[RMDB]
Structure probing data (DMS) for a 177-nucleotide construct. The RNA was probed in 150 mM KOAc, 10 mM MgCl2 and 150 mM bicine (pH 8.5) at 24 C.
RNA sequence: GGGAACGACUCGAGUAGAGUCGAAAAGAUAUUCCGUCCACCCUUUCCUAUAAUCUGGGCGGAAGUUUAAAGGUGAAGGGAUUUUCAUUCAACGUUUCAACAGGGCAGGUGUCUGAGAGUGAGAUAGCAGCGGGAAUUAUUUCGAUAAUUCCCGCUGAAAAGAAACAACAACAACAAC
Reactivity to DMS in 0.01 (KOAc 150mM, MgCl2 10mM, bicine 150mM(pH8.5), 24C), signal-to-noise 1, nucleotides 027 to 126: g010a080u000a070u010u000c000c010g000u000c010c020a090c130c070c060u000u020u000c020c070u010a120u010a070a130u010c210u000g000g030g030c010g000g010a000a010g010u000u000u020a030a090a100g000g010u000g020a060a070g000g040g000a130u000u000u000u000c090a100u000u000c070a030a110c080g010u000u000u000c020a040a060c140a130g000g020g020c060a030g010g010u000g000u000c060u000g010a140g000a050g040u020g000a060g030a070u010a090g010